[RMDB]
RNA sequence: GGGAACGACUCGAGUAGAGUCGAAAACGGUAUUGGUCAAGGCUAUACCGACAGCUCACCUUCAAAAGGGCGCUUAAUCCCCGGCCAAGCGCCGAAAUAUGAAUAGACACCGCUGGGCUGGUAGGGCAAAACAUGGCGAUCUUCGGAUCGCCAUGAAGUUUAUAACCAAGUUCGCUUGGUUAUAAACAAAAGAAACAACAACAACAAC
Reactivity to DMS in 0.01 (KOAc 150mM, MgCl2 10mM, bicine 150mM(pH8.5), 24C), signal-to-noise 2, nucleotides 027 to 156: c040g020g000u010a070u000u020g070g020u000c050a130a140g000g020c020u010a090u000a080c020c010g010a120c030a070g080c040u000c030a060c020c010u000u010c070a070a070a140a180g030g030g000c050g010c020u000u020a070a140u000c030c000c040c040g010g030c050c090a060a050g010c000g020c010c010g010a040a030a100u010a140u000g010a150a180u010a130g010a160c050a090c060c020g020c000u000g020g030g050c040u000g010g040u000a070g010g020g040c060a060a110a080a210c020a050u000g010g000c010g020a010u000c000u000u010c260g050g000a020u010c010g020c000c000a000u000g010a000a050
Reactivity to 2A3 in 0.01 (KOAc 150mM, MgCl2 10mM, bicine 150mM(pH8.5), 24C), signal-to-noise 3, nucleotides 027 to 156: c010g010g000u040a030u090u210g090g020u090c070a110a080g130g000c020u010a010u020a020c000c000g010a020c000a010g000c020u010c020a080c020c010u080u100c040a030a060a040a070g020g000g020c010g000c000u030u030a060a070u160c000c010c010c050g010g010c010c020a050a020g010c020g000c040c020g050a040a070a010u180a040u090g080a070a050u100a100g040a030c040a020c080c040g000c070u020g000g000g010c000u020g030g020u100a060g040g010g000c020a020a040a040a050c010a000u000g010g000c020g000a000u000c000u010u010c050g050g000a010u000c000g000c010c000a010u000g000a000a000